The record gives the reactivity of an RNA of 177 nucleotides to DMS and 2A3. The DMS profile rests on 7,425 reads. Source: RMDB library TTRINS, as collected in RNAgym. Reactivities are given for positions 27 through 126.

[RMDB]
RNA sequence: GGGAACGACUCGAGUAGAGUCGAAAAGAUAUGGAGCUGCUCUCGAUGAAAUACACUCCCCACCAAGAGCAGCUAUCGGAAACGAUAGCUGCUCUUGAGGUGUAUGGAGAGAGACAGCUCCUAAGUCGAACUAUACUUACUUCGGUAAGUAUAGUUCAAAAGAAACAACAACAACAAC
Reactivity to DMS in 0.01 (KOAc 150mM, MgCl2 10mM, bicine 150mM(pH8.5), 24C), signal-to-noise 5, nucleotides 027 to 126: g010a140u010a210u010g010g010a010g020c000u000g000c030u000c000u000c000g010a160u020g010a160a130a010u000a010c020a010c010u010c140c040c010c020a300c300c010a000a010g000a010g010c000a000g000c000u000a000u000c000g010g000a120a080a240c010g010a020u000a000g020c000u000g010c010u000c000u000u000g000a050g010g010u000g010u000a000u000g000g000a070g000a010g000a020g010a070c000a000g000c010u000c000c000u000a010a080g010u020c180
Reactivity to 2A3 in 0.01 (KOAc 150mM, MgCl2 10mM, bicine 150mM(pH8.5), 24C), signal-to-noise 5, nucleotides 027 to 126: g070a040u280a240u300g000g000a000g020c000u000g020c010u000c000u000c010g300a300u110g020a050a070a000u020a000c010a000c020u160c040c020c000c030a030c000c020a000a000g000a000g000c000a000g000c000u000a000u000c000g010g020a120a050a020c000g000a010u000a010g000c000u010g010c000u000c000u000u000g000a000g000g000u000g000u000a000u020g030g020a030g000a000g010a010g020a040c000a000g000c000u000c000c000u010a030a010g220u130c120